Description:
This 207-nucleotide RNA was probed chemically with 2A3.

[RMDB]
RNA sequence: GGGAACGACUCGAGUAGAGUCGAAAAUAAGCAAGAAACUUACAGAGUCAGACGUUCUCGCUAUACGCUCUUCAACCUUAAGCCACCGCUCCUUAGGAGAACUGUAUGGAGUCAGUCAAUCAACCAUAACGCGAAUACUACAGCGUAAGACAUGGAGGUCGGAACGUAGAUUCGUCUACGUUCCGACAAAAGAAACAACAACAACAAC
Reactivity to 2A3 in 0.01 (KOAc 150mM, MgCl2 10mM, bicine 150mM(pH8.5), 24C), signal-to-noise 1, nucleotides 027 to 156: u020a050a000g020c070a070a070g220a300a300a040c080u080u050a020c000a250g000a060g050u030c000a000g000a190c030g000u050u000c050u080c000g000c080u080a070u020a070c080g000c000u000c000u240u030c000a110a080c020c000u030u250a060a000g050c010c020a020c080c010g050c160u150c000c030u000u000a000g020g040a080g010a120a000c000u000g030u050a120u120g020g010a000g000u020c010a000g090u000c020a060a080u070c050a040a100c000c030a010u000a010a000c000g010c000g140a010a010u080a210c130u020a000c030a140g000c120g010u010a030a030g090a000c020a030u020g000g050a050g050
About this RNA:
The reactions ran in a buffer of 150 mM KOAc, 10 mM MgCl2 and 150 mM bicine (pH 8.5), at 24 C.